[RMDB]
RNA sequence: GGGAACGACUCGAGUAGAGUCGAAAAUGAACGUGCGUACAUCUCUGUCAGACUGUACGACAGUCUGACUCUCUCGCACUCUAGUUCCACGAGAGAGAGAGAGCGUUGGAACUAGGGUGAAAUGAAAGCCUUAAUCCACAUUCGUGUGGAUUAAGGCAAAAGAAACAACAACAACAAC
Reactivity to 2A3 in 0.01 (KOAc 150mM, MgCl2 10mM, bicine 150mM(pH8.5), 24C), signal-to-noise 4, nucleotides 027 to 126: u160g030a090a030c080g050u110g060c070g020u130a030c020a130u020c050u010c040u100g010u010c000a000g000a020c020u010g030u190a170c110g090a060c090a000g000u000c000u010g000a000c000u000c000u000c000u000c020g030c010a000c000u010c000u000a000g000u000u000c000c000a000c010g040a070g010a020g000a000g010a010g010a010g010a060g010c000g080u110u070g010g000a000a010c000u000a000g000g010g020u010g020a080a050a020u220g020a110a040a020
Reactivity to DMS in 0.01 (KOAc 150mM, MgCl2 10mM, bicine 150mM(pH8.5), 24C), signal-to-noise 1, nucleotides 027 to 126: u000g020a160a100c090g020u000g000c050g020u000a060c080a140u000c050u020c070u000g010u000c020a000g000a010c020u000g020u000a120c300g010a150c010a010g000u000c010u000g010a050c010u000c040u010c020u000c080g010c020a010c000u000c000u000a040g010u000u000c000c000a090c000g000a080g000a100g000a100g000a080g000a090g000a020g000c050g000u010u000g000g000a010a000c020u000a010g020g000g000u020g000a020a050a070u000g000a060a070a090
Background: An RNA of 177 nucleotides, treated with 2A3 and DMS and read out base by base. For DMS the reverse transcriptase was MarathonRT. The reactions ran in a buffer of 150 mM KOAc, 10 mM MgCl2 and 150 mM bicine (pH 8.5), at 24 C. The 2A3 profile rests on 7,378 reads. For 2A3 the reverse transcriptase was SuperScript II with manganese. The data come from the RNA Mapping Database (RMDB), library M2PK90.